Background
This 207-nucleotide RNA was probed chemically with 2A3 and DMS. For 2A3 the reverse transcriptase was SuperScript II with manganese. Conditions: 150 mM KOAc, 10 mM MgCl2 and 150 mM bicine (pH 8.5), 24 C. It was measured as part of the RMDB library OK3TST. For DMS, 2,959 sequencing reads were counted.
RNA sequence: GGGAACGACUCGAGUAGAGUCGAAAAUGACUUGACAAAUGGUAAUAUUCCACCACUGUUGGAUGUUGCUAACUAUAAGUCUACAAGUCAAGCUAAACCAUUAUUACAGGAUCCAUCUGGCAGAUCUUACCACGUUAUGGAUAGUGAUUCUAACAGACAUGCUAAUGACGUUCGCGUCAUUAGCAUGAAAAGAAACAACAACAACAAC
Reactivity to 2A3 in 0.01 (KOAc 150mM, MgCl2 10mM, bicine 150mM(pH8.5), 24C), signal-to-noise 4, nucleotides 027 to 156: u070g010a020c010u020u000g000a010c000a020a190a130u140g020g030u020a030a000u010a100u190u050c000c000a000c040c010a240c170u230g100u160u010g010g000a020u000g010u000u020g000c000u000a040a080c040u050a080u040a300a060g050u030c010u020a030c050a060a080g000u000c000a000a000g020c030u100a070a050a060c010c000a040u040u070a090u110u080a140c030a030g120g000a030u000c050c000a000u010c050u060g050g000c040a020g000a190u020c030u080u040a030c040c050a070c080g070u110u120a020u070g050g010a030u060a050g090u060g080a080u100u050c060u070a030a060c010a040g080a020
Reactivity to DMS in 0.01 (KOAc 150mM, MgCl2 10mM, bicine 150mM(pH8.5), 24C), signal-to-noise 2, nucleotides 027 to 156: u000g010a020c040u000u010g010a060c050a070a130a050u010g000g050u000a080a110u000a170u000u000c040c050a050c020c100a110c060u030g000u030u000g000g010a080u000g020u000u000g000c010u000a040a110c140u000a120u000a060a120g000u010c040u000a110c060a110a080g060u000c010a030a070g000c040u000a080a060a140c040c020a170u000u000a060u020u000a130c060a100g000g010a110u000c000c010a070u000c020u000g010g010c010a040g000a150u000c070u000u010a050c020c010a020c080g000u000u000a080u010g040g020a110u000a060g030u000g010a060u000u010c010u000a080a010c040a130g020a190